[RMDB]
RNA sequence: GGGAACGACUCGAGUAGAGUCGAAAAGAUGAAACGUUAGUUAGUGAGAAAGAUCUCAUAUUAAGUGUGCUUAACAGGUCUUUAGCAUCCACAUCUCACUGGAAGUUACAGGCCCAGCUAUCGGAGAGACGAUUUAGGGAUUCGUCCCUAAAUCGUCAAAAGAAACAACAACAACAAC
Reactivity to 2A3 in 0.01 (KOAc 150mM, MgCl2 10mM, bicine 150mM(pH8.5), 24C), signal-to-noise 1, nucleotides 027 to 126: g100a030u180g020a090a000a000c020g000u020u010a020g020u050u000a030g020u090g050a040g000a090a190a180g150a250u000c000u020c020a010u020a050u090u060a110a030g030u130g030u070g230c020u060u030a100a020c020a030g000g020u010c000u050u010u000a010g020c010a030u040c050c010a030c010a080u150c190u070c110a090c060u030g010g030a040a000g000u010u030a050c020a060g020g000c000c000c000a010g030c020u040a040u080c020g050g000a050g000a010
Reactivity to DMS in 0.01 (KOAc 150mM, MgCl2 10mM, bicine 150mM(pH8.5), 24C), signal-to-noise 2, nucleotides 027 to 126: g000a090u020g000a130a080a110c060g030u000u040a050g040u000u000a040g030u000g000a020g000a100a170a120g000a100u000c010u000c060a030u000a150u010u000a040a020g000u010g020u000g020c020u000u020a020a020c140a060g030g010u000c000u000u010u000a030g030c040a060u000c030c020a020c140a090u010c150u040c100a050c230u010g010g000a070a070g000u000u000a000c040a060g030g060c010c010c020a040g020c030u000a040u000c040g010g030a120g020a290
Overview
The record gives the reactivity of an RNA of 177 nucleotides to 2A3 and DMS.